[RMDB]
RNA sequence: GGGAACGACUCGAGUAGAGUCGAAAAGAUAUGGAUGAGUACGAACGUCCCUUUGAGCGAUAAGUCCCUAUUCGGAAACGAAUAGGACUUUUGACGCUCUUUGGGACGUUCGUACUCAUCCUAAGUCCCUAUUUCUAAGGUUCGCCUUAGAAAUAGGAAAAGAAACAACAACAACAAC
Reactivity to DMS in 0.01 (KOAc 150mM, MgCl2 10mM, bicine 150mM(pH8.5), 24C), signal-to-noise 3, nucleotides 027 to 126: g000a110u000a280u000g000g000a020u000g010a020g010u000a010c020g000a010a020c000g020u000c000c000c000u000u000u000g010a020g030c010g030a180u000a000a010g010u000c140c060c030u000a020u000u000c000g000g000a130a130a240c000g020a010a010u000a030g000g000a010c000u000u000u010u000g020a200c070g000c000u020c000u000u000u010g010g010g010a010c000g000u010u000c000g000u000a000c000u000c000a000u000c000c000u000a020a100g010u000c030
Source: RMDB library TTRINS, as collected in RNAgym. The record gives the reactivity of an RNA of 177 nucleotides to DMS. Reactivities are given for positions 27 through 126. For DMS the reverse transcriptase was MarathonRT.